[RMDB]
RNA sequence: GGGAACGACUCGAGUAGAGUCGAAAAUCUGGACCGUUCGCGGUCCAGAAACUACCGAGAAUGCGACUCGGUAUAUAAACGCAACCCUUGGAAACAAGGCAACACUCUGCUGCUUCGGCAGCAGAAAGAGCUCUUAAUCAUUCGUGAUUAAGAGCUCAAAAGAAACAACAACAACAAC
Reactivity to 2A3 in 0.01 (KOAc 150mM, MgCl2 10mM, bicine 150mM(pH8.5), 24C), signal-to-noise 1, nucleotides 027 to 126: u010c000u010g010g000a010c020c000g050u050u040c240g010c030g110g030u040c000c000a000g000a000a000a000c010u030a030c010c010g010a010g020a080a060u060g010c000g040a040c000u000c000g000g000u010a010u010a000u010a030a010a000c000g000c020a030a070c000c010c010u000u010g030g000a030a020a010c000a000a020g000g030c000a060a000c030a010c050u000c000u000g020c030u010g000c010u040u040c190g070g000c000a010g000c000a000g000a010a000a000
Reactivity to DMS in 0.01 (KOAc 150mM, MgCl2 10mM, bicine 150mM(pH8.5), 24C), signal-to-noise 1, nucleotides 027 to 126: u010c010u020g030g000a000c000c000g040u000u050c160g010c000g030g000u010c000c000a020g000a000a060a070c040u000a270c010c010g000a000g000a040a080u000g020c040g000a030c010u000c000g000g000u000a010u000a040u010a000a020a010c030g030c000a020a160c250c000c000u000u000g000g010a150a120a240c000a000a000g000g010c180a010a010c070a030c090u000c000u000g000c000u000g000c000u010u010c210g010g030c000a000g020c000a000g010a010a050a160

Chemical mapping of a 177-nucleotide RNA with 2A3 and DMS. The 2A3 profile rests on 2,796 reads.